Notes: Chemical mapping of a 177-nucleotide RNA with DMS and 2A3. The RNA was probed in 150 mM KOAc, 10 mM MgCl2 and 150 mM bicine (pH 8.5) at 24 C. DMS adducts were read by reverse transcription with MarathonRT. 2A3 adducts were read by reverse transcription with SuperScript II with manganese. The DMS profile rests on 1,415 reads. The 2A3 profile rests on 2,724 reads. It was measured as part of the RMDB library 15KREP.
RNA sequence: GGGAACGACUCGAGUAGAGUCGAAAAGCGCAAACCGUUCUGCAAUGUGUAAUUGGUGCUUGAUUAGCCAAGAUUCCAUAACUCACUACCCAGCUCUUAAGAUGGUUCAAACACAUCUUAGCCACUAGUGUACGUAUGAGUUCGCUCAUACGUACACAAAAGAAACAACAACAACAAC
Reactivity to DMS in 0.01 (KOAc 150mM, MgCl2 10mM, bicine 150mM(pH8.5), 24C), signal-to-noise 2, nucleotides 027 to 126: g020c050g000c080a080a080a050c090c000g000u000u000c020u000g020c060a060a100u000g040u010g030u020a030a090u000u000g000g010u000g020c070u000u010g000a120u000u010a050g020c080c080a080a050g000a100u000u000c070c010a050u000a100a070c060u010c020a100c090u000a130c030c000c030a100g010c080u000c160u000u010a010a000g030a030u000g000g000u000u010c300a060a110a070c160a050c010a000u000c010u000u000a040g020c090c080a030c160u000a120
Reactivity to 2A3 in 0.01 (KOAc 150mM, MgCl2 10mM, bicine 150mM(pH8.5), 24C), signal-to-noise 3, nucleotides 027 to 126: g060c040g000c020a020a060a060c000c030g030u060u010c030u060g010c010a010a100u100g040u050g000u130a100a060u080u050g030g010u040g010c000u050u050g040a100u040u210a040g040c030c000a020a010g040a130u070u030c020c020a020u020a060a050c040u030c060a010c010u040a080c010c020c010a020g010c010u000c030u090u020a020a010g010a010u020g010g020u060u120c060a090a140a020c060a000c000a110u000c000u000u010a020g010c030c000a050c060u070a070